[RMDB]
RNA sequence: GGGAACGACUCGAGUAGAGUCGAAAAGGCCGACCGCUGGACGUCGCACGCAUUGCGCUGCCGCUGCUGGCCUACUUCGCCAUCAUGUGGGUAGGCGGCUACCUACUGGGGGCGGCGCUGCGGCUAGCACCUCGAUCGCUUUCGAGCGAUCGAGGUGAAAAGAAACAACAACAACAAC
Reactivity to 2A3 in 0.01 (KOAc 150mM, MgCl2 10mM, bicine 150mM(pH8.5), 24C), signal-to-noise 1, nucleotides 027 to 126: g020g060c010c030g050a030c030c050g000c120u110g000g000a060c000g030u060c000g000c030a160c070g020c030a060u020u300g010c000g010c000u000g040c010c010g110c050u050g000c010u070g270g110c010c010u000a000c010u130u290c050g030c010c000a200u140c010a020u230g060u060g000g000g000u000a010g000g060c000g020g010c000u100a090c010c010u120a180c190u090g040g000g010g030g010c000g000g000c000g000c020u010g000c000g000g000c020u050a040g000
Reactivity to DMS in 0.01 (KOAc 150mM, MgCl2 10mM, bicine 150mM(pH8.5), 24C), signal-to-noise 1, nucleotides 027 to 126: g020g010c070c010g020a060c060c090g020c080u010g000g040a070c120g000u010c070g030c020a080c060g000c060a080u000u010g020c090g050c000u000g030c020c060g000c070u010g020c060u000g030g000c000c010u000a010c090u030u030c040g040c030c150a090u040c060a120u000g010u000g020g000g030u000a050g040g130c110g000g010c020u030a090c050c000u010a060c140u000g000g000g010g010g010c080g010g000c030g020c020u010g030c070g020g000c030u010a060g010
The record gives the reactivity of an RNA of 177 nucleotides to 2A3 and DMS.
For 2A3, 1,090 sequencing reads were counted.
The RNA was probed in 150 mM KOAc, 10 mM MgCl2 and 150 mM bicine (pH 8.5) at 24 C.
The DMS profile rests on 851 reads.